An RNA of 207 nucleotides, treated with 2A3 and read out base by base. It was measured as part of the RMDB library PDB130. Values cover nucleotides 27 to 156. The reactions ran in a buffer of 150 mM KOAc, 10 mM MgCl2 and 150 mM bicine (pH 8.5), at 24 C. For 2A3, 637 sequencing reads were counted.
RNA sequence: GGGAACGACUCGAGUAGAGUCGAAAAGUCGACCGAAGUCCUGCAAAAGGUCACCCAGGGUAAUUUUAACCUUGGUGUUGCUUUAGCAGAGGCCAGGUCGACAGCCUCACAACUCGCGACGCAAACCAUUGCGCUCGUGAAGGCGUACACUGCCGCUGUGUGAAAUGGGGUUCGCCCCAUUUCACACAAAAGAAACAACAACAACAAC
Reactivity to 2A3 in 0.01 (KOAc 150mM, MgCl2 10mM, bicine 150mM(pH8.5), 24C), signal-to-noise 1, nucleotides 027 to 156: g000u010c000g000a000c000c000g000a000a000g010u000c000c000u000g030c000a050a000a050a050g000g050u050c040a020c270c050c030a000g070g020g040u070a130a280u120u210u090u210a100a110c000c000u000u000g010g030u070g000u000u200g050c000u000u030u010a010g000c000a000g050a240g020g000c000c000a000g000g010u000c000g000a000c000a000g000c000c030u040c000a170c040a070a100c030u040c000g000c000g030a000c000g010c000a050a120a250c130c060a190u120u010g000c030g010c040u040c000g000u010g000a010a040g000g040c000g020u070a070c190a040c140u110g010c030c030g040c030u030